[RMDB]
RNA sequence: GGGAACGACUCGAGUAGAGUCGAAAACUCGCUCAAACAUACAGAGUUGUUGUGCGAGAUGAAUCUCUCUGCAUUAGAAUGGUCGAAGAAUCAGCGGCUAUUCGAGACCAAAUUAGAAGCCGCAUUAACAGCUUUGGAACACGCCUUGCUGACGUGAGCUACUAUAGGGAUUCGUCCCUAUAGUAGCAAAAGAAACAACAACAACAAC
Reactivity to 2A3 in 0.01 (KOAc 150mM, MgCl2 10mM, bicine 150mM(pH8.5), 24C), signal-to-noise 4, nucleotides 027 to 156: c000u010c010g000c010u050c050a130a140a070c030a030u280a090c070a060g130a020g150u130u070g050u020u020g010u030g000c000g000a010g000a030u080g080a080a120u030c030u000c000u010c060u110g070c040a080u020u180a160g110a230a120u130g000g020u000c020g030a160a030g000a070a040u040c080a030g020c000g000g000c010u020a010u000u000c010g010a020g010a010c000c040a050a100a220u140u120a100g040a100a030g000c000c020g020c000a010u070u120a040a080c030a000g040c050u100u150u240g030g030a060a050c030a010c060g090c000c000u030u040g000c010u040g040a030c020g030u010g040a010
Reactivity to DMS in 0.01 (KOAc 150mM, MgCl2 10mM, bicine 150mM(pH8.5), 24C), signal-to-noise 3, nucleotides 027 to 156: c010u000c020g040c030u000c050a040a100a060c050a110u020a300c030a090g020a120g050u000u010g030u000u000g010u000g010c020g010a060g010a150u000g000a150a090u000c070u000c030u020c050u010g000c060a120u000u000a140g010a080a090u000g010g020u010c010g010a180a150g000a120a130u000c070a130g020c020g020g000c020u010a160u010u000c020g000a300g000a240c030c040a040a070a130u010u010a160g000a180a040g030c000c010g000c040a150u000u020a070a070c050a010g000c030u000u010u000g020g000a110a160c040a050c000g010c010c020u000u000g040c120u010g000a060c040g030u000g000a230